[RMDB]
RNA sequence: GGGAACGACUCGAGUAGAGUCGAAAACAGGUCGAUAGUACCAAUAACCCUGGUACCAAUAAGGUACUAUCGACCAUUUAGCUCUUCUUCUACAACACGCUCGCUGAAGAAGAGCAUUUCAGGUACCAGGGUAGCGAGCGGAAGGCCGAGAGGCCGACGUAUGGCUACGGUUCGCCGUAGCCAUACGAAAAGAAACAACAACAACAAC
Reactivity to DMS in 0.01 (KOAc 150mM, MgCl2 10mM, bicine 150mM(pH8.5), 24C), signal-to-noise 1, nucleotides 027 to 156: c020a100g070g030u000c010g070a010u000a030g020u030a070c000c000a140a180u000a150a100c000c030c000u010g010g010u000a010c020c020a110a140u000a100a130g000g000u000a020c010u000a020u000c020g000a040c010c000a030u000u000u000a150g000c000u000c010u000u000c000u000u000c010u010a130c020a060a070c090a080c030g030c020u000c020g030c050u000g010a050a010g000a050a040g020a010g000c000a000u000u000u000c210a140g030g040u000a020c020c000a050g000g000g020u000a020g000c000g000a040g070c020g010g020a170a080g000g020c000c000g010a300g000a260g000g020c010c000g050a050
Reactivity to 2A3 in 0.01 (KOAc 150mM, MgCl2 10mM, bicine 150mM(pH8.5), 24C), signal-to-noise 2, nucleotides 027 to 156: c030a020g000g060u000c000g010a010u000a000g010u000a000c000c020a050a180u210a060a040c000c000c000u000g000g000u000a010c010c020a040a080u140a250a130g000g000u000a000c020u000a000u000c000g010a010c000c000a010u010u040u100a020g000c000u010c000u000u000c010u030u000c030u070a070c020a200a030c130a090c110g000c020u000c000g000c000u010g000a000a000g010a010a000g000a010g000c000a000u040u170u070c030a000g000g000u000a000c000c000a000g000g000g000u010a000g000c000g000a000g000c010g000g060a070a040g020g010c000c010g100a090g010a030g100g000c000c000g010a000